The record gives the reactivity of an RNA of 177 nucleotides to DMS and 2A3.
2A3 is a SHAPE reagent: it acylates the 2'-hydroxyl of flexible nucleotides of all four kinds.
The RNA was probed in 150 mM KOAc, 10 mM MgCl2 and 150 mM bicine (pH 8.5) at 24 C.
[RMDB]
RNA sequence: GGGAACGACUCGAGUAGAGUCGAAAAUAUAUAUCAGUUAGAGAGGUGUGGGGCCCAUCCCGCGGUAGGUAAGUCGUAUCAUACUCCUGUGAUAUGGUCUAAGUGUGCAGUCUGAGGAUGAUAUAUAGUGUAUUAAUUUAUUCGUAAAUUAAUACACAAAAGAAACAACAACAACAAC
Reactivity to DMS in 0.01 (KOAc 150mM, MgCl2 10mM, bicine 150mM(pH8.5), 24C), signal-to-noise 6, nucleotides 027 to 126: u030a040u020a040u010a040u010c020a070g000u010u020a070g000a120g010a090g000g020u010g030u010g010g010g000g020c030c050c030a060u030c040c010c020g030c070g000g010u010a020g000g020u010a060a080g010u010c030g040u000a010u010c030a030u000a080c100u010c080c060u000g000u000g000a040u010a040u000g010g000u020c030u010a060a100g020u010g010u010g000c050a040g010u000c040u000g010a100g010g010a100u010g000a030u020a030u010a050u010a080
Reactivity to 2A3 in 0.01 (KOAc 150mM, MgCl2 10mM, bicine 150mM(pH8.5), 24C), signal-to-noise 4, nucleotides 027 to 126: u100a000u010a000u000a010u030c020a020g080u080u180a040g030a010g010a030g100g050u060g000u060g030g000g010g010c000c020c010a030u040c000c000c010g030c020g010g020u060a020g030g020u020a020a040g020u040c010g010u010a010u030c010a000u020a070c040u030c020c020u020g000u010g030a020u010a020u060g020g010u000c020u030a070a030g040u030g030u040g020c020a010g040u000c020u020g010a020g060g010a020u020g010a000u010a000u010a010u030a050